[RMDB]
An RNA of 177 nucleotides, treated with 2A3 and DMS and read out base by base. For 2A3 the reverse transcriptase was SuperScript II with manganese. The data come from the RNA Mapping Database (RMDB), library RFMREP.
RNA sequence: GGGAACGACUCGAGUAGAGUCGAAAAGAAGUCCAUCUCGUCGUCUCAACCGGGAUUGAUCACGAUUGGUUCCACUCUGUCAAUCGUAGUUAUCUAAAAUAGUGAUUGCCCCACAGCAACGUGGCUGCACUUACAGAUCGUUCGCGAUCUGUAAGUGAAAAGAAACAACAACAACAAC
Reactivity to 2A3 in 0.01 (KOAc 150mM, MgCl2 10mM, bicine 150mM(pH8.5), 24C), signal-to-noise 2, nucleotides 027 to 126: g080a070a010g010u060c000c020a080u010c020u010c000g070u000c010g090u000c030u020c140a100a070c050c010g020g000g020a020u000u080g030a030u040c060a000c050g010a030u020u020g040g010u120u030c030c010a050c030u090c030u050g030u030c000a040a010u000c010g030u010a050g080u100u060a040u000c080u100a070a100a190a210u160a030g090u050g070a130u040u120g060c000c000c030c010a080c000a000g040c010a050a110c100g030u080g050g010c000u050g050
Reactivity to DMS in 0.01 (KOAc 150mM, MgCl2 10mM, bicine 150mM(pH8.5), 24C), signal-to-noise 2, nucleotides 027 to 126: g000a090a100g020u010c020c060a030u000c010u000c090g020u000c090g010u000c060u000c090a090a130c080c010g010g000g000a060u000u000g020a030u000c080a050c030g010a020u000u000g000g000u000u000c050c040a040c080u010c080u010g000u000c020a030a020u000c010g010u000a080g010u010u000a040u000c050u010a040a080a100a080u000a070g030u010g000a080u000u000g010c020c030c000c110a130c100a050g010c050a110a070c160g010u000g020g020c160u010g010